Source information: Chemical mapping of a 177-nucleotide RNA with DMS and 2A3. It was measured as part of the RMDB library OK1LIB.

[RMDB]
RNA sequence: GGGAACGACUCGAGUAGAGUCGAAAAUACACUCACCGCUUGUACGACGUGGAGGUGAUUGAGCAUAGUCCGGAUAUUAGUUUCCUCGUGGUGUGUCCAUCCGCCGAGUCCUCAUGCGCUGUGCCAAGAUGACUACCUGCUUCGGCAGGUAGUCAUCAAAAGAAACAACAACAACAAC
Reactivity to DMS in 0.01 (KOAc 150mM, MgCl2 10mM, bicine 150mM(pH8.5), 24C), signal-to-noise 1, nucleotides 027 to 126: u000a120c000a080c010u010c040a090c000c000g020c000u020u000g010u000a120c020g010a020c100g040u000g030g010a060g000g000u000g010a020u000u000g000a040g010c000a050u000a080g010u050c030c060g010g030a000u000a070u010u000a070g000u010u040u000c000c100u000c160g000u020g010g000u030g000u000g000u020c030c000a080u020c000c000g020c020c030g000a150g000u000c020c020u000c050a130u000g000c080g030c020u000g000u000g000c100c040a140a140
Reactivity to 2A3 in 0.01 (KOAc 150mM, MgCl2 10mM, bicine 150mM(pH8.5), 24C), signal-to-noise 3, nucleotides 027 to 126: u150a000c050a040c010u030c020a080c020c020g080c070u050u130g040u140a120c130g040a010c030g060u070g000g020a050g070g040u060g070a130u050u100g060a020g000c020a060u080a110g060u200c050c000g020g010a020u020a060u150u170a110g020u030u050u050c010c010u000c020g000u150g050g000u100g000u050g040u010c020c040a010u010c000c010g060c020c000g000a000g030u010c000c010u020c040a050u130g020c050g000c000u010g000u000g070c000c000a080a000
Description:
High 2A3 reactivity points to a flexible backbone, as in loops and unpaired stretches.